[RMDB]
RNA sequence: GGGAACGACUCGAGUAGAGUCGAAAAAUAAGGUUUUGGCUAAGCCCACUCCCAUUUUGCUUGUAAACCUAGGGAUAAAACCUUCCCUGAUUCUGAUGGAGACCCUUUCAUAUUCAUUAGUGCGGGGGCUUAACACCACAUUCGUGUGGUGUUAAGCAAAAGAAACAACAACAACAAC
Reactivity to DMS in 0.01 (KOAc 150mM, MgCl2 10mM, bicine 150mM(pH8.5), 24C), signal-to-noise 2, nucleotides 027 to 126: a060u010a110a050g010g010u000u000u000u000g010g030c070u010a080a090g000c010c050c040a170c130u000c020c010c020a110u000u020u020u010g000c070u000u010g000u010a070a060a090c110c080u010a050g010g000g000a070u000a030a010a060a080c020c030u000u000c000c000c000u000g010a090u010u000c050u000g020a050u000g010g010a050g010a160c100c050c050u000u000u010c070a070u010a140u010u000c070a050u000u010a040g000u010g000c130g000g010g010g010